[RMDB]
RNA sequence: GGGAACGACUCGAGUAGAGUCGAAAAAGCUUUCGCCCCGUGCCCACUCCCUCUUCCAGGGUGAGGUAGGCCUCCAUGUCGUCCGGGCUCGUCUCCACCAGGAUGCGGGCGUCGCGAUGGGGGCGGAAUUAUGAAAAUACUUCGGUAUUUUCAUAAUAAAAGAAACAACAACAACAAC
Reactivity to 2A3 in 0.01 (KOAc 150mM, MgCl2 10mM, bicine 150mM(pH8.5), 24C), signal-to-noise 4, nucleotides 027 to 126: a000g050c060u030u040u030c010g020c000c010c000c000g050u060g010c000c010c010a040c020u040c010c000c010u060c050u150u050c040c040a020g000g000g020u050g020a060g010g040u040a040g020g040c000c010u020c020c020a080u140g060u130c020g030u010c030c070g030g020g000c000u010c010g020u000c010u000c010c010a120c030c020a040g010g000a000u020g020c010g000g010g000c010g060u070c010g010c030g020a040u040g050g010g000g000g010c000g020g020a020
Reactivity to DMS in 0.01 (KOAc 150mM, MgCl2 10mM, bicine 150mM(pH8.5), 24C), signal-to-noise 9, nucleotides 027 to 126: a100g000c120u000u000u000c020g010c010c000c000c020g020u010g000c010c010c030a150c040u000c010c020c010u000c090u000u010c170c130a140g010g000g010u000g000a050g010g010u000a080g010g000c010c050u000c040c050a090u000g010u000c030g010u010c100c070g010g000g010c000u000c020g010u000c140u000c010c010a150c300c210a160g000g010a010u000g010c020g000g000g000c030g010u000c100g010c070g000a040u000g010g010g000g010g010c010g010g000a050
Conditions: 150 mM KOAc, 10 mM MgCl2 and 150 mM bicine (pH 8.5), 24 C.
This 177-nucleotide RNA was probed chemically with 2A3 and DMS.
For DMS, 31,696 sequencing reads were counted.
The data come from the RNA Mapping Database (RMDB), library OK2TST.